[RMDB]
RNA sequence: GGGAACGACUCGAGUAGAGUCGAAAAAUGAAUGCCUCAAACCAUUCAUACUGCCACUCAGUUGGGGUUAAGAUGAUUGCAUAAUAAUUCUUAAGGCUUGAAAACUCAUAGACCCUAUAUGAGUCCACACCACGUGCUGGUUCGCCAGCACGUGGUGAAAAGAAACAACAACAACAAC
Reactivity to 2A3 in 0.01 (KOAc 150mM, MgCl2 10mM, bicine 150mM(pH8.5), 24C), signal-to-noise 1, nucleotides 027 to 126: a000u030g000a000a000u030g010c000c070u260c240a070a050a000c010c000a000u020u020c000a050u020a070c000u160g000c000c000a050c030u080c030a130g000u120u110g010g010g020g000u090u050a030a150g060a030u200g000a070u000u010g030c050a000u030a080a130u090a080a020u300u000c000u060u090a070a050g130g030c020u000u100g000a040a060a020a080c000u000c050a000u000a040g050a110c050c000c000u050a030u010a050u080g000a010g060u040c020c000a080